[RMDB]
The record gives the reactivity of an RNA of 177 nucleotides to DMS. Values cover nucleotides 27 to 126. Source: RMDB library TTRINS, as collected in RNAgym. For DMS the reverse transcriptase was MarathonRT. Conditions: 150 mM KOAc, 10 mM MgCl2 and 150 mM bicine (pH 8.5), 24 C.
RNA sequence: GGGAACGACUCGAGUAGAGUCGAAAAGAUAUGGAAGAACGCUAGCUCAUAUGCAGAAUCGGUGUGCAUAUCGGAAACGAUAUGCACACCGAAGCAUACUAGAGCUUGGACCGUUCUUCCUAAGUCACAUGUUGCGAAAGUUCGCUUUCGCAACAUGAAAAGAAACAACAACAACAAC
Reactivity to DMS in 0.01 (KOAc 150mM, MgCl2 10mM, bicine 150mM(pH8.5), 24C), signal-to-noise 1, nucleotides 027 to 126: g020a080u000a300u000g010g010a050a030g000a010a010c000g020c010u000a050g020c010u040c000a290u000a000u010g020c040a100g000a100a200u000c000g100g000u010g000u000g020c000a000u000a020u010c000g020g030a140a150a300c000g000a050u030a000u000g000c000a000c000a000c000c000g000a000a030g000c000a000u000a030c300u030a120g010a000g010c000u000u010g010g000a100c300c010g000u000u000c000u000u000c000c010u010a050a060g000u000c060a250